[RMDB]
RNA sequence: GGGAACGACUCGAGUAGAGUCGAAAACUGCGGUUAUGAUUAUGUCUACAACCCUUUCUUUGUCGAUGUUCAACAGUGGGGUUAUGUAGGCAAUCUUGCUACUAAUCACGAUCGUUAUUGCUCUGUCACCCUACCCCGUUCGCGGGGUAGAAAAGAAACAACAACAACAAC
Reactivity to 2A3 in 0.01 (KOAc 150mM, MgCl2 10mM, bicine 150mM(pH8.5), 24C), signal-to-noise 6, nucleotides 027 to 129: c050u030g000c000g010g010u020u020a050u050g000a010u010u020a030u110g000u000c010u000a000c010a000a060c010c000c000u030u230u050c010u040u040u050g040u040c110g240a220u220g080u210u140c020a030a020c010a070g000u030g030g000g000g000u050u050a130u190g010u000a000g020g000c010a000a000u030c050u050u150g090c060u040a070c030u030a050a010u080c030a010c070g010a000u020c010g020u040u130a120u120u180g000c000u030c010u040g060u030c000a080c010c000
Reactivity to DMS in 0.01 (KOAc 150mM, MgCl2 10mM, bicine 150mM(pH8.5), 24C), signal-to-noise 3, nucleotides 027 to 129: c080u040g020c000g000g030u030u020a070u020g030a050u020u030a040u030g040u000c020u000a040c010a020a080c020c010c030u030u100u060c040u000u000u000g060u040c090g040a190u100g020u000u000c000a060a040c140a000g030u030g020g010g010g060u000u000a050u000g050u030a040g030g040c010a010a030u040c000u000u000g010c130u030a070c180u040a020a060u010c000a060c000g030a050u000c030g020u000u000a100u000u000g010c070u000c060u070g030u030c140a140c070c060